[RMDB]
RNA sequence: GGGAACGACUCGAGUAGAGUCGAAAAUCAUGUGGUGGGCGAUCGCACUCUUGGCCUGGAUGUGACGCUCGGAAAUGGCGAUGAGGCGCGAGACAUCAGCGUGCGAUGGGCACCGGCACAGACAAAAAAAUCCGGUAAAUUUCGAUUUACCGGAUUUAAAAGAAACAACAACAACAAC
Reactivity to DMS in 0.01 (KOAc 150mM, MgCl2 10mM, bicine 150mM(pH8.5), 24C), signal-to-noise 4, nucleotides 027 to 126: u010c060a140u000g030u000g000g020u000g010g020g030c020g000a040u000c010g010c010a020c020u000c120u000u000g020g010c040c060u010g010g010a060u000g010u000g020a110c050g010c020u000c030g000g010a090a100a140u000g010g010c080g020a110u000g000a190g030g020c060g010c080g010a130g010a070c060a050u000c060a070g010c110g000u000g000c000g010a020u000g010g020g000c020a100c020c020g010g000c020a020c020a070g000a110c100a010a010a020a140
Reactivity to 2A3 in 0.01 (KOAc 150mM, MgCl2 10mM, bicine 150mM(pH8.5), 24C), signal-to-noise 2, nucleotides 027 to 126: u050c030a050u050g040u070g110g300u030g030g060g000c040g030a040u000c000g000c030a010c020u070c030u030u120g060g000c000c030u010g060g050a070u040g100u090g210a080c060g010c020u050c050g050g020a210a170a060u200g080g020c050g030a070u090g030a020g070g030c130g000c040g130a050g000a030c030a070u090c030a000g050c050g060u020g000c040g010a010u000g030g150g000c060a090c070c000g030g000c020a020c000a020g090a040c020a000a110a050a070
Structure probing data (DMS and 2A3) for a 177-nucleotide construct. Reactivities are rounded to 0.1 and cut off at 0 and 3. The reactions ran in a buffer of 150 mM KOAc, 10 mM MgCl2 and 150 mM bicine (pH 8.5), at 24 C. The DMS profile rests on 4,081 reads. 2A3 adducts were read by reverse transcription with SuperScript II with manganese.